Conditions: 150 mM KOAc, 10 mM MgCl2 and 150 mM bicine (pH 8.5), 24 C. Chemical mapping of a 207-nucleotide RNA with DMS and 2A3. DMS adducts were read by reverse transcription with MarathonRT. Reactivities are rounded to 0.1 and cut off at 0 and 3. For 2A3, 3,582 sequencing reads were counted. The DMS profile rests on 2,745 reads. The data come from the RNA Mapping Database (RMDB), library OK3TST. 2A3 adducts were read by reverse transcription with SuperScript II with manganese.

RNA sequence: GGGAACGACUCGAGUAGAGUCGAAAACGAUCUGUUCGCAGAUCGAGCUACGGAGACGUAGCGAAGCGCGCGAUAGCCCGGGCGCGCGCCCUACCGGAAAUAAAACCAUAUCCACGUGUGCUAGGAUAUGGCCGGGCUAAAAGAAACAGCACACGAAUAAAUCCCUUUUAUUCGUAAAAGGGAUUUAAAAAGAAACAACAACAACAAC
Reactivity to DMS in 0.01 (KOAc 150mM, MgCl2 10mM, bicine 150mM(pH8.5), 24C), signal-to-noise 1, nucleotides 027 to 156: c010g010a020u000c010u000g000u000u010c270g040c000a010g160a020u000c000g000a060g020c000u010a010c000g020g000a300g010a290c010g020u000a000g000c000g000a080a060g000c010g000c010g010c000g020a060u010a040g000c010c000c050g070g000g000c030g010c020g040c000g010c000c030c060u000a210c000c050g020g020a090a060a120u000a060a130a080a160c000c010a040u000a010u000c020c000a050c020g000u000g030u000g010c010u000a150g010g000a030u000a000u000g030g020c000c050g030g010g010c010u000a000a010a070a100g000a240a140a080c110a050g000c010a030c010a030c030g000a130a140
Reactivity to 2A3 in 0.01 (KOAc 150mM, MgCl2 10mM, bicine 150mM(pH8.5), 24C), signal-to-noise 3, nucleotides 027 to 156: c000g000a000u000c000u020g040u090u090c240g010c100a000g000a000u010c000g000a020g000c000u020a010c010g030g030a080g040a070c010g010u000a000g000c010g010a070a010g020c010g000c000g000c000g060a080u010a020g000c010c000c000g000g000g000c000g010c010g000c010g020c020c000c000u080a090c000c040g110g170a060a110a080u300a050a110a060a040c000c000a000u010a000u000c010c010a030c140g000u010g000u010g000c010u020a030g000g010a000u000a000u000g010g000c000c000g000g010g000c000u010a010a000a000a000g050a000a170a010c040a020g020c010a010c000a000c010g000a020a020